[RMDB]
RNA sequence: GGGAACGACUCGAGUAGAGUCGAAAAGGAUCCUCUCACAGGAUUGUCACUGUGUCCCGAAAAGUGACAACUGUGUGUUCGGGACACCAUCUGAGUAACAGAUGGUAUUAAGAGUAUUAGAGGAUCGCUAGAUGAGAGUAUUCGUACUUUCAUCUAGAAAAGAAACAACAACAACAAC
Reactivity to DMS in 0.01 (KOAc 150mM, MgCl2 10mM, bicine 150mM(pH8.5), 24C), signal-to-noise 9, nucleotides 027 to 126: g010g000a010u000c000c000u000c000u000c020a010c010a010g000g000a180u000u000g010u000c000a010c000u000g010u010g010u000c010c010c010g010a090a080a150a040g010u000g010a010c000a020a050c010u000g010u000g020u000g010u000u000c010g010g020g010a130c140a010c000c000a000u000c000u000g000a300g020u010a150a180c010a010g000a010u000g000g010u000a030u000u000a070a200g000a040g010u000a080u000u010a030g010a020g010g000a010u000c000g010
Reactivity to 2A3 in 0.01 (KOAc 150mM, MgCl2 10mM, bicine 150mM(pH8.5), 24C), signal-to-noise 9, nucleotides 027 to 126: g030g000a010u000c000c000u000c000u010c010a000c010a010g060g080a230u040u040g010u000c000a000c010u040g030u030g080u240c010c010c000g030a150a190a010a010g000u010g000a000c000a000a020c010u010g000u000g000u000g030u050u020c030g030g040g070a020c010a000c060c000a000u000c000u040g120a180g190u160a290a060c000a010g000a000u000g000g010u000a000u010u090a020a010g010a000g020u050a050u150u180a030g000a000g000g000a000u000c000g000
The data come from the RNA Mapping Database (RMDB), library OK2TRN.
The record gives the reactivity of an RNA of 177 nucleotides to DMS and 2A3.
As a SHAPE reagent, 2A3 marks flexible, mostly unpaired nucleotides at the ribose 2'-OH.
Reactivities are given for positions 27 through 126.
High DMS reactivity at an A or C suggests that its Watson-Crick edge is free.
For 2A3 the reverse transcriptase was SuperScript II with manganese.